[RMDB]
RNA sequence: GGGAACGACUCGAGUAGAGUCGAAAACUUAUGAUGAUAUAGCAGGAGAUUGCUAUGUUGCCCGGCAGAGGCUUUGUAUCUGGGCACUAGUCUCAACAGAUGACGACACUUCUGUUCAAUCUCAUAUCGAAAACAGUCGUUUCGACGACUGUUUUCGAAAAGAAACAACAACAACAAC
Reactivity to 2A3 in 0.01 (KOAc 150mM, MgCl2 10mM, bicine 150mM(pH8.5), 24C), signal-to-noise 3, nucleotides 027 to 126: c000u010u010a000u020g060a050u130g000a000u070a000u090a100g000c010a000g000g010a010g020a070u090u220g000c000u020a020u240g070u130u090g010c010c030c000g020g000c060a020g030a090g190g180c120u210u220u200g080u050a120u080c030u100g010g000g000c000a000c000u000a000g070u030c040u010c090a010a080c030a130g080a100u150g090a060c050g000a010c000a010c020u000u000c000u000g010u030u010c010a030a000u030c010u010c010a020u050a030u020

An RNA of 177 nucleotides, treated with 2A3 and read out base by base.